[RMDB]
RNA sequence: GGGAACGACUCGAGUAGAGUCGAAAAGAUAUGGAUACCAUGAUGAAUAAACAGACAUGAGCAUAAAGGGUCGGAAACGACCUACAAAGCUCAACAGCUGUUUAUUCAUCCGCUGGUAUCCUAAGUCCAAUAACUUCUGGUUCGCCAGAAGUUAUUGAAAAGAAACAACAACAACAAC
Reactivity to 2A3 in 0.01 (KOAc 150mM, MgCl2 10mM, bicine 150mM(pH8.5), 24C), signal-to-noise 2, nucleotides 027 to 126: g020a060u150a040u290g000g010a010u020a010c010c020a020u190g000a000u010g000a010a010u010a010a010a000c000a010g120a020c090a200u130g010a020g000c010a010u190a240a170a120g050g010g020u010c020g000g020a050a140a110c030g010a000c000c010u000a010c010a010a100a010g000c000u000c030a010a020c060a030g040c000u000g000u010u010u000a000u010u010c010a000u000c010c000g000c020u000g000g000u010a000u000c000c000u000a010a010g020u000c000
Reactivity to DMS in 0.01 (KOAc 150mM, MgCl2 10mM, bicine 150mM(pH8.5), 24C), signal-to-noise 5, nucleotides 027 to 126: g000a090u010a300u010g010g000a020u000a020c000c000a010u000g000a070u000g000a020a000u000a000a000a010c000a000g000a050c100a250u000g000a000g010c000a040u010a140a160a300g000g000g000u010c010g020g000a110a100a280c010g000a010c000c010u000a020c120a140a150a140g010c000u000c000a010a070c300a170g000c010u000g000u000u000u000a000u000u000c000a000u000c000c030g000c000u000g000g010u000a000u000c000c000u000a020a090g000u000c040

Chemical mapping of a 177-nucleotide RNA with 2A3 and DMS. It was measured as part of the RMDB library TTRINS. The 2A3 profile rests on 7,764 reads. DMS adducts were read by reverse transcription with MarathonRT. The reactions ran in a buffer of 150 mM KOAc, 10 mM MgCl2 and 150 mM bicine (pH 8.5), at 24 C.